[RMDB]
RNA sequence: GGGAACGACUCGAGUAGAGUCGAAAAUGAAGAUUCAGACAUUGAUGACGUAUCUUCAAUCGACACGUCUACAUUAAUGCUAAUGUCAGAUAUAAUUAUUAGCGACUAUAGUUCGCUGCCAAUAGAACGGGACUUCCCAAUUCGUUGGGAAGUCCCGAAAAGAAACAACAACAACAAC
Reactivity to 2A3 in 0.01 (KOAc 150mM, MgCl2 10mM, bicine 150mM(pH8.5), 24C), signal-to-noise 1, nucleotides 027 to 126: u220g040a000a130g090a100u000u030c030a000g000a170c120a190u180u190g000a050u050g000a150c000g000u000a000u010c000u200u060c020a000a180u040c000g040a040c050a000c040g020u070c000u050a030c020a150u000u150a080a080u220g020c040u100a000a000u060g000u040c050a000g000a000u160a000u000a270a170u300u200a000u000u050a000g000c050g000a000c040u030a000u050a300g030u180u000c000g000c040u040g000c000c000a130a000u010a170g030a120a000

An RNA of 177 nucleotides, treated with 2A3 and read out base by base.
It was measured as part of the RMDB library OK1LIB.
The reactions ran in a buffer of 150 mM KOAc, 10 mM MgCl2 and 150 mM bicine (pH 8.5), at 24 C.